[RMDB]
RNA sequence: GGGAACGACUCGAGUAGAGUCGAAAACCGAAUCCAAAGAUCAAGCGGCGCAGGUUAAAUCGGAAAUAGUCGUUGCAGACUCCGAUGUAGCGGUGAAAUUUUAGGAGAUAAGGUUGCGGUUGGUGGCUUGGGUCUUGCCGCAGCUCGAAAAUGAAGGCUUCUUACUCAAGUUCGCUUGAGUAAGAAGAAAAGAAACAACAACAACAAC
Reactivity to DMS in 0.01 (KOAc 150mM, MgCl2 10mM, bicine 150mM(pH8.5), 24C), signal-to-noise 2, nucleotides 027 to 156: c020c010g000a120a150u010c010c030a120a070a140g000a090u000c050a100a190g030c000g030g010c050g010c030a090g030g040u000u000a020a070a060u000c020g020g000a080a080a090u010a070g010u000c040g020u000u000g020c110a250g000a050c020u010c000c000g020a070u000g010u000a050g000c000g030g030u000g010a090a050a130u000u000u000u010a190g010g000a080g010a140u000a080a070g020g000u000u010g000c010g010g010u000u000g020g000u000g020g000c090u000u010g020g000g010u000c000u000u000g010c000c000g010c030a100g000c020u000c010g010a030a070a080a130u010g000a120a120g020g000
Reactivity to 2A3 in 0.01 (KOAc 150mM, MgCl2 10mM, bicine 150mM(pH8.5), 24C), signal-to-noise 3, nucleotides 027 to 156: c010c000g030a030a060u070c020c020a090a060a000g030a050u080c040a060a000g010c010g080g000c010g030c050a030g000g050u090u120a040a130a060u040c020g000g040a040a080a120u140a060g010u020c020g100u110u270g040c030a020g020a060c010u000c000c000g030a030u020g030u030a020g040c030g000g070u050g030a050a080a160u120u150u100u100a080g020g010a050g030a040u120a110a060g010g030u030u020g000c020g020g030u040u090g020g070u040g030g000c040u040u070g070g000g000u030c000u000u060g000c000c000g000c000a000g000c000u040c040g040a040a050a020a050u170g030a060a010g090g000
Record summary:
The data come from the RNA Mapping Database (RMDB), library ARCHII. Structure probing data (DMS and 2A3) for a 207-nucleotide construct. 2A3 adducts were read by reverse transcription with SuperScript II with manganese. The reactions ran in a buffer of 150 mM KOAc, 10 mM MgCl2 and 150 mM bicine (pH 8.5), at 24 C. The DMS profile rests on 5,133 reads.